[RMDB]
RNA sequence: GGGAACGACUCGAGUAGAGUCGAAAAUGGCAAAUUCUUUAGACACAGUCCCCAAUUUAGUGCCUGAGUGAGCAAUGUCAAUGAGCUUUUAAUUUGACCCUCUCCAACUGAAAAAAAGGGUAUGCUACUAUUCUGAUGACUUCGGUCAUCAGAAUAGAAAAGAAACAACAACAACAAC
Reactivity to 2A3 in 0.01 (KOAc 150mM, MgCl2 10mM, bicine 150mM(pH8.5), 24C), signal-to-noise 2, nucleotides 027 to 126: u050g030g010c020a050a000a160u140u000c070u040u120u110a040g040a030c020a010c050a040g120u040c040c000c000c020a050a040u110u090u220a040g010u020g040c000c010u050g080a080g000u060g030a030g000c030a030a010u100g020u010c040a020a060u120g010a010g030c150u160u130u130u260a050a210u060u070u080g010a030c000c000c000u040c010u030c020c010a080a100c070u070g030a170a060a000a000a010a000a020g020g000g030u040a050u110g020c010u020a060
Reactivity to DMS in 0.01 (KOAc 150mM, MgCl2 10mM, bicine 150mM(pH8.5), 24C), signal-to-noise 2, nucleotides 027 to 126: u020g010g020c050a040a080a090u000u010c030u000u000u010a070g010a100c140a040c050a130g010u000c050c010c010c060a080a070u010u000u000a100g020u000g010c010c030u000g030a100g020u000g010a040g000c090a070a110u000g010u010c060a020a080u000g010a140g020c090u000u000u010u010a050a170u000u010u010g000a050c000c050c020u000c030u000c050c040a090a080c110u020g010a000a000a050a080a040a080a070g000g010g000u000a030u000g010c050u010a110